[RMDB]
RNA sequence: GGGAACGACUCGAGUAGAGUCGAAAAGCAGUGGAGCAUUAUGGAUCCCCGCUGCUGAUCGUUGCAGGCGCUGGAUCUGGUAAGACAUCUGUGCUGACACGGCGAAUUGCCUACUUGAUGCGUGUUCGAGGUGUACAACCGCAGAACAUCUUGGCAAGUCCAAAAUGACUUUCGAGUCAUUUUGGACAAAAGAAACAACAACAACAAC
Reactivity to DMS in 0.01 (KOAc 150mM, MgCl2 10mM, bicine 150mM(pH8.5), 24C), signal-to-noise 1, nucleotides 027 to 156: g020c020a000g040u010g000g000a050g000c070a080u000u010a190u000g010g040a140u000c020c010c050c020g000c000u000g020c020u030g010a070u000c080g030u020u010g020c080a120g030g030c000g080c010u000g000g010a170u000c040u000g050g080u000a030a140g020a080c100a060u000c100u020g030u010g010c000u020g000a160c090a100c060g000g000c040g010a100a110u000u000g030c000c000u000a050c020u000u010g020a070u010g010c160g000u000g020u010u010c020g010a100g000g060u000g050u000a080c150a200a040c010c000g010c040a080g000a050a040c000a080u000c030u010u000g020g000c020a060a300
Reactivity to 2A3 in 0.01 (KOAc 150mM, MgCl2 10mM, bicine 150mM(pH8.5), 24C), signal-to-noise 3, nucleotides 027 to 156: g020c000a000g010u010g020g010a040g040c160a130u100u190a130u300g050g050a100u130c040c010c000c010g000c000u010g000c000u010g000a140u190c070g030u100u230g000c040a050g050g080c020g010c170u140g020g000a030u000c010u050g050g100u160a070a060g010a040c040a070u030c080u080g030u020g000c020u010g050a030c010a000c110g020g000c040g050a130a120u070u130g000c020c000u070a110c050u040u110g020a070u110g030c040g020u010g000u050u060c030g000a030g060g000u050g020u130a210c110a080a000c060c030g000c020a010g000a010a000c010a040u010c060u030u020g030g010c040a080a030
This 207-nucleotide RNA was probed chemically with DMS and 2A3.
For DMS, 2,217 sequencing reads were counted.
Conditions: 150 mM KOAc, 10 mM MgCl2 and 150 mM bicine (pH 8.5), 24 C.
2A3 adducts were read by reverse transcription with SuperScript II with manganese.
Source: RMDB library OK3TST, as collected in RNAgym.
The 2A3 profile rests on 1,037 reads.
DMS (dimethyl sulfate) methylates the pairing face of unpaired adenines and cytosines.
Reactivities are given for positions 27 through 156.